RNA sequence: GGGAACGACUCGAGUAGAGUCGAAAAAUGGCGAAUGCAUGGGGAACUACAUCUGUGUCGCGCGUUCGAUUCUCGCCAGGGCCUGGUCCUGUAGCUCAGUUGGUAGAGCAAGCUGUUCCCCGGACACAAAAUCCAGCUAGGUUCGCCUAGCUGGAAACUUUAGUGAGGGGUUCGCCCCUCACUAAAGAAAAGAAACAACAACAACAAC
Reactivity to DMS in 0.01 (KOAc 150mM, MgCl2 10mM, bicine 150mM(pH8.5), 24C), signal-to-noise 1, nucleotides 027 to 156: a140u020g020g050c000g030a080a020u000g020c020a140u040g030g000g000g030a050a100c050u000a100c070a070u000c100u000g020u010g040u000c010g050c030g040c130g000u000u000c010g000a170u000u000c000u010c030g040c060c020a220g020g010g010c030c060u000g020g010u000c020c010u010g000u010a140g010c010u000c000a150g000u000u010g030g030u010a200g000a110g000c010a070a050g030c050u000g040u000u010c000c000c030c040g020g010a130c120a150c060a070a060a150a120u000c000c000a010g000c000u000a020g020g010u000u000c300g040c000c000u000a010g020c000u000g000g000a000a000a010
Reactivity to 2A3 in 0.01 (KOAc 150mM, MgCl2 10mM, bicine 150mM(pH8.5), 24C), signal-to-noise 2, nucleotides 027 to 156: a010u100g040g000c040g040a100a030u120g030c040a060u090g010g010g010g020a040a040c060u110a030c130a160u100c030u060g020u010g040u070c010g020c010g020c040g040u040u030c000g010a040u070u060c010u040c030g000c000c010a010g000g030g000c070c180u140g030g010u050c000c000u050g030u090a030g020c000u010c030a030g030u100u110g150g030u150a020g020a010g030c010a020a050g000c050u100g040u010u040c020c000c000c020g000g040a040c060a000c010a070a050a080a010u030c000c000a010g000c000u000a000g000g040u040u010c070g060c030c000u000a000g000c000u000g010g000a000a000a000
The data come from the RNA Mapping Database (RMDB), library M2RFPK. The record gives the reactivity of an RNA of 207 nucleotides to DMS and 2A3. The RNA was probed in 150 mM KOAc, 10 mM MgCl2 and 150 mM bicine (pH 8.5) at 24 C. For 2A3, 983 sequencing reads were counted.